RNA sequence: GGGAACGACUCGAGUAGAGUCGAAAAGUUACAAGUAGGAGAUUCAGUUCUCUUGCAAGGCCAUUCUCUAGCUAAGAAUAUCCUGCAUGUCGUAGGCCCAGAUGCCCGCGCUAAACAGGAUGUUUCUAAAGAGCCAUCUUCGGAUGGCUCAAAAGAAACAACAACAACAAC
Reactivity to DMS in 0.01 (KOAc 150mM, MgCl2 10mM, bicine 150mM(pH8.5), 24C), signal-to-noise 1, nucleotides 027 to 129: g000u050u000a090c100a000a000g000u020a000g000g000a000g000a070u000u000c250a170g100u030u000c080u060c030u010u070g040c030a220a130g010g000c030c010a090u010u030c000u000c000u000a050g020c120u030a110a080g000a000a050u000a010u050c010c000u030g010c150a300u010g010u160c030g070u000a050g000g030c000c000c140a090g000a070u110g000c010c000c030g070c000g050c280u070a070a150a130c000a100g000g040a010u040g040u000u000u000c020u000a080a060a030
Reactivity to 2A3 in 0.01 (KOAc 150mM, MgCl2 10mM, bicine 150mM(pH8.5), 24C), signal-to-noise 2, nucleotides 027 to 129: g000u130u070a030c000a160a090g000u010a030g030g000a000g000a010u000u160c130a060g300u090u090c000u000c000u000u000g000c000a050a130g000g040c000c120a070u040u000c020u020c000u030a000g080c050u160a210a000g010a000a040u050a000u060c000c000u010g000c030a050u000g100u140c010g000u000a060g000g000c110c000c060a010g010a060u140g000c000c000c000g060c000g000c010u040a110a000a000c020a000g040g000a040u000g000u000u110u040c000u010a040a060a030

Source: RMDB library 15KLIB, as collected in RNAgym. This 170-nucleotide RNA was probed chemically with DMS and 2A3. For DMS the reverse transcriptase was MarathonRT. The reactions ran in a buffer of 150 mM KOAc, 10 mM MgCl2 and 150 mM bicine (pH 8.5), at 24 C. In probing experiments dimethyl sulfate is read out at A N1 and C N3, which are open when not base-paired. As a SHAPE reagent, 2A3 marks flexible, mostly unpaired nucleotides at the ribose 2'-OH.